[RMDB]
An RNA of 177 nucleotides, treated with DMS and 2A3 and read out base by base. It was measured as part of the RMDB library TTRDEL. For DMS, 1,034 sequencing reads were counted. The reactions ran in a buffer of 150 mM KOAc, 10 mM MgCl2 and 150 mM bicine (pH 8.5), at 24 C. For 2A3, 3,384 sequencing reads were counted. 2A3 adducts were read by reverse transcription with SuperScript II with manganese.
RNA sequence: GGGAACGACUCGAGUAGAGUCGAAAAGAUAUGGAGUUUAUCGUGCUUAGCCGACGAUCUCGGAAACGAGGGAGGCUAAGAACUACACGUAAACUCCUAAGUCAAAACCAUCUCUUCGGAGAUGGAACCUUGUUAUCGUCUUCGGACGAUAACAAGGAAAAGAAACAACAACAACAAC
Reactivity to DMS in 0.01 (KOAc 150mM, MgCl2 10mM, bicine 150mM(pH8.5), 24C), signal-to-noise 1, nucleotides 027 to 126: g000a030u020a300u020g000g000a020g030u000u000u000a020u000c040g000u000g000c010u000u000a000g030c030c020g000a040c260g000a000u000c000u000c000g000g000a160a020a220c040g000a030g010g000g000a030g010g000c000u000a010a020g000a040a010c160u010a300c000a040c000g000u000a030a010a010c000u000c000c000u010a030a030g000u010c060a050a060a100a150c010c000a030u000c000u000c010u000u000c240g000g000a010g030a020u000g000g010a060a090
Reactivity to 2A3 in 0.01 (KOAc 150mM, MgCl2 10mM, bicine 150mM(pH8.5), 24C), signal-to-noise 2, nucleotides 027 to 126: g050a030u080a030u180g030g010a060g010u020u030u020a300u300c080g000u000g000c010u000u000a010g000c020c010g120a300c010g030a030u000c000u010c000g040g020a110a060a050c020g000a010g000g010g000a000g000g000c000u000a000a000g000a000a020c040u160a030c010a000c020g010u000a000a010a000c000u010c000c000u010a080a000g020u000c020a010a050a050a060c010c000a000u000c000u010c030u060u140c300g170g010a010g000a000u010g010g000a010a000